An RNA of 207 nucleotides, treated with 2A3 and read out base by base. For 2A3, 593 sequencing reads were counted. The data come from the RNA Mapping Database (RMDB), library M2RFPK. Conditions: 150 mM KOAc, 10 mM MgCl2 and 150 mM bicine (pH 8.5), 24 C.
[RMDB]
RNA sequence: GGGAACGACUCGAGUAGAGUCGAAAAACACCGGACUAGGCGUACGCGCCUUGUCCGGUGAGGGUCAGACGAGCAGACACCCAUUGAAGUUCUGCUCUACCGUUAAAAGGAAGUAAACCAUCAUGAAAGAAGUGCGCUUGGUUCGCCAAGCGCACAACGUUAGUACCGAGUUCGCUCGGUACUAACGAAAAGAAACAACAACAACAAC
Reactivity to 2A3 in 0.01 (KOAc 150mM, MgCl2 10mM, bicine 150mM(pH8.5), 24C), signal-to-noise 1, nucleotides 027 to 156: a000c010a000c000c000g000g000a000c020u100a010g030g000c000g020u050a030c270g000c000g030c050c020u000u020g000u000c000c010g020g000u010g000a000g000g020g000u010c030a050g040a150c030g000a120g030c000a030g000a000c000a000c000c000c050a030u080u300g150a020a020g000u000u000c000u000g020c000u000c000u000a000c000c000g060u070u070a110a090a020a050g030g050a100a030g110u190a080a060a100c060c000a010u150c060a100u260g190a170a060a080g100a200a030g000u000g000c080g000c000u000u010g020g000u030u040c070g000c080c000a000a000g000c000g000c030a000c000a000a000